The record gives the reactivity of an RNA of 207 nucleotides to DMS and 2A3. The data come from the RNA Mapping Database (RMDB), library OK3TST. For 2A3, 3,759 sequencing reads were counted. For DMS, 3,949 sequencing reads were counted.
RNA sequence: GGGAACGACUCGAGUAGAGUCGAAAAACAACCAAUAGGUGGUGGAGCCAGGAUUUGGGCCCCAUCUGCCUGACUCUCUAGAGGCUCUAUCUUCCAGUCUUCCAGAGUUGAGUCUAAGCCAUGAAUAGGACAAUUAGACAGCAGAGGAAACCCAUUCCGUAGAAAUCUAAUUCGUUAGAUUUCUACGAAAAGAAACAACAACAACAAC
Reactivity to DMS in 0.01 (KOAc 150mM, MgCl2 10mM, bicine 150mM(pH8.5), 24C), signal-to-noise 3, nucleotides 027 to 156: a030c040a100a200c090c080a090a150u010a040g020g030u010g000g030u010g000g020a040g030c020c020a120g030g010a210u010u000u000g040g000g010c010c010c010c040a030u000c010u010g030c000c000u000g010a090c040u000c020u000c030u000a050g000a300g000g000c020u010c020u000a090u000c030u010u000c080c060a090g000u000c010u010u010c030c010a180g000a100g010u010u010g000a100g010u000c010u010a020a120g020c060c010a140u010g000a130a180u010a110g000g010a110c050a070a220u000u000a080g010a040c040a110g000c040a010g010a080g010g000a090a100a100c010c000c030a280u000u010c010
Reactivity to 2A3 in 0.01 (KOAc 150mM, MgCl2 10mM, bicine 150mM(pH8.5), 24C), signal-to-noise 5, nucleotides 027 to 156: a000c070a040a050c050c030a050a090u180a080g030g000u020g010g010u010g010g000a000g010c010c010a030g160g070a240u070u160u300g070g020g010c010c010c000c010a020u030c030u040g020c000c000u020g010a070c020u040c010u010c040u180a050g020a100g150g000c000u000c000u010a070u070c070u100u030c020c040a020g000u000c000u040u030c020c020a010g030a000g070u070u100g050a030g020u000c020u030a020a040g020c030c010a110u190g100a140a100u220a190g010g020a050c040a060a100u020u010a020g010a040c010a010g020c020a020g060a030g050g030a070a070a070c030c030c050a050u160u060c070